[RMDB]
RNA sequence: GGGAACGACUCGAGUAGAGUCGAAAAGACGGCGUCACGACCCUUGAUGUGCUGACGGCGAAGUGGCGGCAGGUUCUCUCAGAAUCUCUGAAUGCCAAUGGCACUGUUUCGGACGCGGAGCGCGCCAGCGGCACGGUGGUUUCGACCACCGUGCCGCAAAAGAAACAACAACAACAAC
Reactivity to 2A3 in 0.01 (KOAc 150mM, MgCl2 10mM, bicine 150mM(pH8.5), 24C), signal-to-noise 1, nucleotides 027 to 126: g150a000c050g010g030c000g000u070c120a160c290g020a120c000c000c000u000u160g280a220u150g000u040g030c000u020g020a050c100g000g020c000g100a170a070g010u030g210g000c000g000g030c000a000g010g000u070u000c100u000c020u020c000a030g080a040a040u000c060u000c000u040g040a300a000u070g000c000c000a000a050u270g000g000c000a050c130u170g050u030u020u030c000g050g070a000c150g060c050g050g030a060g000c100g000c010g020c060c090a070
This 177-nucleotide RNA was probed chemically with 2A3. For 2A3 the reverse transcriptase was SuperScript II with manganese. For 2A3, 310 sequencing reads were counted.